[RMDB]
Conditions: 150 mM KOAc, 10 mM MgCl2 and 150 mM bicine (pH 8.5), 24 C. Chemical mapping of a 207-nucleotide RNA with 2A3. For 2A3, 525 sequencing reads were counted. Source: RMDB library ARCHII, as collected in RNAgym.
RNA sequence: GGGAACGACUCGAGUAGAGUCGAAAAGGUGGUCUCGGGUUCGAGUCUCGCUUUCGAUCCCUCGAUCUGCCACGUCUGUUCGAAGAGUAGUCUUCGUGGCAACUGGCAGUUAAACCGUGUAGUACCGAUGGAGGUUGGAAACAAUGCACAUCACUACGCUCGUAUCUUCGUUCGCGAAGAUACGAGCAAAAGAAACAACAACAACAAC
Reactivity to 2A3 in 0.01 (KOAc 150mM, MgCl2 10mM, bicine 150mM(pH8.5), 24C), signal-to-noise 1, nucleotides 027 to 156: g080g000u100g040g010u050c000u000c030g110g000g020u270u300c020g040a000g040u000c020u050c130g010c060u160u030u050c060g030a040u020c010c000c040u040c050g120a180u130c040u040g010c010c000a000c150g000u000c120u000g030u000u000c000g050a070a000g040a020g080u300a080g080u030c000u010u000c000g010u150g080g000c000a000a020c000u000g000g000c000a000g000u000u210a050a130a080c080c010g020u110g000u040a050g000u020a000c000c110g010a000u050g080g010a040g050g000u020u040g080g040a000a000a130c040a080a010u110g000c020a000c000a110u090c010a000c090u100a020c040